This 177-nucleotide RNA was probed chemically with DMS and 2A3. For DMS, 5,105 sequencing reads were counted. The RNA was probed in 150 mM KOAc, 10 mM MgCl2 and 150 mM bicine (pH 8.5) at 24 C. For DMS the reverse transcriptase was MarathonRT. For 2A3 the reverse transcriptase was SuperScript II with manganese.

[RMDB]
RNA sequence: GGGAACGACUCGAGUAGAGUCGAAAAGAUAUGGAGUUUAGAGUAGCGAGAUGGGACACUCGGAAACGAGAAAUCCCAUGUCGCGCAGAUACUAAACUCCUAAGUCAAACCAUGGUUCGCCAUGGAAGAUUAGUUUACGGUUCGCCGUAAACUAAUCAAAAGAAACAACAACAACAAC
Reactivity to DMS in 0.01 (KOAc 150mM, MgCl2 10mM, bicine 150mM(pH8.5), 24C), signal-to-noise 5, nucleotides 027 to 126: g010a040u010a300u000g000g010a020g020u000u000u000a010g000a070g010u000a060g030c010g000a010g010a030u000g000g000g000a050c240a300c010u000c000g010g000a070a080a200c000g010a010g000a040a070a300u000c010c000c000a010u000g000u000c000g010c010g000c130a090g000a060u000a030c010u000a000a000a000c000u000c000c000u000a010a050g010u010c010a080a120a200c010c010a010u000g000g000u010u000c260g020c000c000a000u010g010g000a070a090
Reactivity to 2A3 in 0.01 (KOAc 150mM, MgCl2 10mM, bicine 150mM(pH8.5), 24C), signal-to-noise 4, nucleotides 027 to 126: g050a020u070a050u150g000g000a000g000u000u020u000a030g010a030g020u080a030g020c010g000a020g010a080u010g000g000g060a040c050a020c140u000c010g020g030a080a050a020c010g000a000g000a110a180a040u040c010c000c000a010u030g180u010c000g000c000g000c020a000g010a060u060a060c010u000a000a000a010c000u010c000c000u010a050a000g010u000c040a060a010a070c000c000a010u000g000g030u080u100c300g040c070c000a010u010g000g010a010a020